[RMDB]
RNA sequence: GGGAACGACUCGAGUAGAGUCGAAAAGAUAUGGAUGCGGUUCUCGUACUUCAGUGUGCGACGAUCGUACUGGGUCGGAAACGACCUUACGGGAGCACCUGAAGUACGAGAACCGCAUCCUAAGUCACUUACAUGAUGGGUUCGCCCAUCAUGUAAGAAAAGAAACAACAACAACAAC
Reactivity to DMS in 0.01 (KOAc 150mM, MgCl2 10mM, bicine 150mM(pH8.5), 24C), signal-to-noise 2, nucleotides 027 to 126: g010a060u010a300u020g010g010a010u000g050c010g000g030u010u000c010u000c010g020u010a000c000u010u000c010a030g020u030g060u000g010c000g010a110c300g000a020u010c010g000u000a010c300u010g040g010g010u000c000g030g000a100a110a300c010g010a020c010c000u000u000a000c000g020g000g010a030g030c000a010c000c000u000g000a000a020g030u000a000c000g000a010g010a000a000c000c000g000c010a000u000c000c010u000a010a050g000u000c030a220